[RMDB]
RNA sequence: GGGAACGACUCGAGUAGAGUCGAAAAGUGGCACAGUUCGCUGUGCCACAAAGGACUACCCGUCACGGUUAAGGCCAUACGGACAGCCGGGUCCACUGCCGAAAAUCCGUAGCUUCGGCUACGGAAAUCUCAAUUAGGUGUUCGCACCUAAUUGAGAAAAAGAAACAACAACAACAAC
Reactivity to DMS in 0.01 (KOAc 150mM, MgCl2 10mM, bicine 150mM(pH8.5), 24C), signal-to-noise 2, nucleotides 027 to 126: g040u010g000g000c000a020c000a010g020u010u020c210g000c020u000g030u000g000c010c010a000c010a020a040a080g040g000a050c030u000a110c040c000c030g000u000c150a100c110g020g010u010u020a060a130g010g010c000c030a110u010a160c090g010g000a050c050a140g000c000c050g000g000g000u000c000c000a140c080u020g010c040c020g000a230a030a050a110u000c000c010g030u000a000g010c000u000u000c210g040g000c000u000a000c000g000g000a000a030a030
Reactivity to 2A3 in 0.01 (KOAc 150mM, MgCl2 10mM, bicine 150mM(pH8.5), 24C), signal-to-noise 3, nucleotides 027 to 126: g010u000g000g000c000a000c000a010g000u070u090c160g040c110u020g020u000g020c030c000a000c000a000a000a000g010g000a040c010u070a070c010c000c010g080u110c070a070c100g030g040u110u220a130a160g110g000c000c020a080u090a170c050g020g060a050c020a050g130c020c020g000g010g000u010c000c010a040c040u040g000c000c030g030a060a010a000a060u000c000c000g000u000a000g010c010u050u020c210g140g000c000u000a000c000g000g010a030a010a000